The record gives the reactivity of an RNA of 170 nucleotides to DMS and 2A3.
The DMS profile rests on 26,272 reads.
2A3 adducts were read by reverse transcription with SuperScript II with manganese.
RNA sequence: GGGAACGACUCGAGUAGAGUCGAAAAUGCAACUCGUGGAGCGACUUGCGUCAUUGGUACUACAAAGUUCUACGGUGGCUGGGAUUUCAUGCUUAAAACAUUGUACAAAGAUGUUGAUAAUCCGCAUUAAGACAACUCUUCGGAGUUGUCAAAAGAAACAACAACAACAAC
Reactivity to DMS in 0.01 (KOAc 150mM, MgCl2 10mM, bicine 150mM(pH8.5), 24C), signal-to-noise 7, nucleotides 027 to 129: u060g030c010a010a030c040u000c060g000u020g000g040a090g030c160g030a070c100u030u040g020c300g000u000c020a130u020u020g000g030u030a010c000u000a150c200a000a040a060g010u010u020c070u040a050c130g010g020u000g010g080c030u030g000g030g020a090u030u010u070c040a000u030g040c070u030u040a030a030a020a010c040a060u010u000g020u070a100c280a080a060a090g050a060u000g010u000u000g020a110u010a080a070u000c010c020g000c050a000u000u000a040a080
Reactivity to 2A3 in 0.01 (KOAc 150mM, MgCl2 10mM, bicine 150mM(pH8.5), 24C), signal-to-noise 7, nucleotides 027 to 129: u090g000c020a020a010c010u030c060g000u020g030g040a050g020c050g110a130c040u060u110g040c070g070u040c020a060u040u180g080g000u130a030c000u010a000c070a030a060a030g000u010u020c020u040a030c020g040g030u050g040g000c040u060g050g000g010a030u060u060u110c030a020u140g040c040u050u120a030a070a000a020c020a050u050u140g040u100a040c060a030a080a030g050a030u070g000u030u030g060a060u130a110a040u020c010c020g000c030a020u050u090a050a000